[RMDB]
RNA sequence: GGGAACGACUCGAGUAGAGUCGAAAACGAUCCUUCGUCGAGAAGCACUUCGAUUCUUUCGCGCGCGGUAAGCUUGCCUUUGCCGUGCUGGGCAUCGAUACGGCGCUGUCCGCCGCCAAGGCGAGCACUAUAAAAUCGGGUUCGCCCGAUUUUAUAGAAAAGAAACAACAACAACAAC
Reactivity to 2A3 in 0.01 (KOAc 150mM, MgCl2 10mM, bicine 150mM(pH8.5), 24C), signal-to-noise 6, nucleotides 027 to 126: c030g050a120u110c020c000u040u040c030g090u060c100g060a040g020a170a030g020c050a010c070u050u030c030g060a070u070u000c010u030u090u060c050g010c000g010c020g000c010g070g070u090a100a030g010c010u020u040g010c010c010u030u040u030g070c110c060g070u080g050c030u100g000g000g000c010a010u030c020g040a040u070a270c180g130g000c020g050c020u010g020u000c010c010g000c000c000g000c010c010a010a010g000g000c010g010a000g000c000a010
Reactivity to DMS in 0.01 (KOAc 150mM, MgCl2 10mM, bicine 150mM(pH8.5), 24C), signal-to-noise 8, nucleotides 027 to 126: c130g010a110u000c090c020u000u000c040g010u010c140g010a150g000a050a060g010c170a080c100u000u000c020g010a080u000u000c020u000u000u010c050g020c140g010c060g010c040g010g000u010a070a090g000c010u000u000g000c030c010u000u000u010g020c050c040g020u000g020c010u010g040g010g010c010a010u000c030g010a170u010a090c230g010g000c010g010c090u000g000u000c020c010g010c010c010g010c080c060a010a030g010g010c010g000a010g010c030a190
The data come from the RNA Mapping Database (RMDB), library OK2TST. The record gives the reactivity of an RNA of 177 nucleotides to 2A3 and DMS. For 2A3, 13,117 sequencing reads were counted.